[RMDB]
RNA sequence: GGGAACGACUCGAGUAGAGUCGAAAAUGGGCGACGUUUCCGGCAGUGCGUAUGGCGGGAACCGGCUGAUGCCUCCAUUGCCGCCGAGCAUGAUGGGGGGAGGCCGCGGCGACGCAUUCGCCAAGGAGUGCUAAUCGAUGUUCGCAUCGAUUAGCACAAAAGAAACAACAACAACAAC
Reactivity to DMS in 0.01 (KOAc 150mM, MgCl2 10mM, bicine 150mM(pH8.5), 24C), signal-to-noise 3, nucleotides 027 to 126: u010g000g010g000c010g000a110c080g010u000u000u000c010c030g010g010c020a070g010u000g010c020g040u010a060u010g020g020c020g010g010g000a060a110c300c030g010g000c010u000g010a230u000g020c010c000u000c020c040a050u000u000g010c010c010g000c160c190g000a090g010c030a050u000g000a070u000g000g000g000g000g000g000a230g020g010c020c000g010c070g000g000c030g000a040c100g000c030a040u000u000c110g030c000c020a100a080g000g000a150
Reactivity to 2A3 in 0.01 (KOAc 150mM, MgCl2 10mM, bicine 150mM(pH8.5), 24C), signal-to-noise 2, nucleotides 027 to 126: u080g020g020g020c040g000a070c030g000u030u020u050c000c000g000g020c000a010g020u020g040c000g020u080a190u160g160g030c010g020g010g000a060a090c010c000g010g000c030u040g050a100u200g180c000c010u000c000c000a020u040u030g040c000c060g190c040c120g040a090g010c050a050u210g010a050u020g080g000g000g000g040g030a030g000g000c010c020g030c030g030g000c020g010a000c000g000c020a030u040u020c050g030c010c020a020a010g080g050a120